Source: RMDB libraries RFM100 and RFMREP, as collected in RNAgym. This 177-nucleotide RNA was probed chemically with DMS and 2A3. Reactivities are given for positions 27 through 126.
RNA sequence: GGGAACGACUCGAGUAGAGUCGAAAAGAGAAGUCCAAAGCAGCUGCUGGCCACUGCACAAGAUUAGUCAAGUUUAUACUCUUGUGCGUGUGACAGCGGCUAUUGCGGGCAUUUCAUUGGCUGCGAACGCUACGUCAGCGUUCGCGCUGACGUAGCGAAAAGAAACAACAACAACAAC
Reactivity to DMS in 0.01 (KOAc 150mM, MgCl2 10mM, bicine 150mM(pH8.5), 24C), signal-to-noise 3, nucleotides 027 to 126: g000a020g000a030a080g030u000c030c000a020a300a010g010c070a010g000c010u000g000c000u000g000g020c060c010a010c010u000g030c010a000c000a010a010g000a010u010u010a070g020u010c240a130a150g030u030u020u010a140u010a050c090u000c010u000u000g010u000g010c010g000u010g000u010g000a120c000a000g010c020g020g010c000u000a000u000u000g010c300g000g000g020c010a060u000u000u010c010a100u000u000g030g000c000u010g010c030g000a050a060
Reactivity to 2A3 in 0.01 (KOAc 150mM, MgCl2 10mM, bicine 150mM(pH8.5), 24C), signal-to-noise 4, nucleotides 027 to 126: g090a000g010a010a060g000u000c010c000a070a010a000g050c040a010g000c020u010g000c000u000g010g030c080c000a000c050u110g000c000a000c000a010a000g010a040u090u090a080g080u170c090a180a010g060u070u150u130a160u050a020c030u000c000u010u000g000u000g000c000g030u050g010u040g010a010c000a000g000c000g000g020c000u000a010u000u060g010c010g000g000g000c010a010u000u060u020c070a060u040u120g120g000c120u120g040c100g070a090a020
DMS adducts were read by reverse transcription with MarathonRT.